[RMDB]
RNA sequence: GGGAACGACUCGAGUAGAGUCGAAAAGCACGUAGAGUUGGUGAGUGGGAGUAGAUGGUAGAGGCCAACAAACCUGGAAGAAGUCUUGUUUCACACCUUGGUUAGUUCAAAGGAUCAUCGACUGGACCUUACGGUCUAUUUUCGAAUAGACCGUAAGAAAAGAAACAACAACAACAAC
Reactivity to DMS in 0.01 (KOAc 150mM, MgCl2 10mM, bicine 150mM(pH8.5), 24C), signal-to-noise 7, nucleotides 027 to 126: g020c070a050c090g020u000a080g010a090g010u000u000g010g020u000g010a090g030u000g000g000g000a080g010u000a050g010a060u010g010g020u000a070g000a070g010g010c040c060a050a060c110a040a070a100c040c020u000g000g010a100a080g010a070a100g010u000c080u000u010g000u000u000u010c050a110c120a110c050c030u000u000g010g010u000u000a080g000u000u000c070a050a080a070g000g010a100u000c050a060u000c070g000a060c070u000g000g000a090c160
Reactivity to 2A3 in 0.01 (KOAc 150mM, MgCl2 10mM, bicine 150mM(pH8.5), 24C), signal-to-noise 4, nucleotides 027 to 126: g020c010a010c080g060u090a040g010a040g100u090u110g050g000u040g030a080g010u070g010g030g010a040g010u070a030g010a060u030g020g010u020a050g010a020g080g040c040c000a030a010c010a060a080a020c020c010u040g010g040a070a040g040a060a010g070u010c020u080u090g060u030u070u060c050a060c010a020c040c010u030u020g050g010u060u080a040g030u110u040c050a100a070a030g050g010a050u040c010a030u070c030g040a060c040u030g020g020a030c010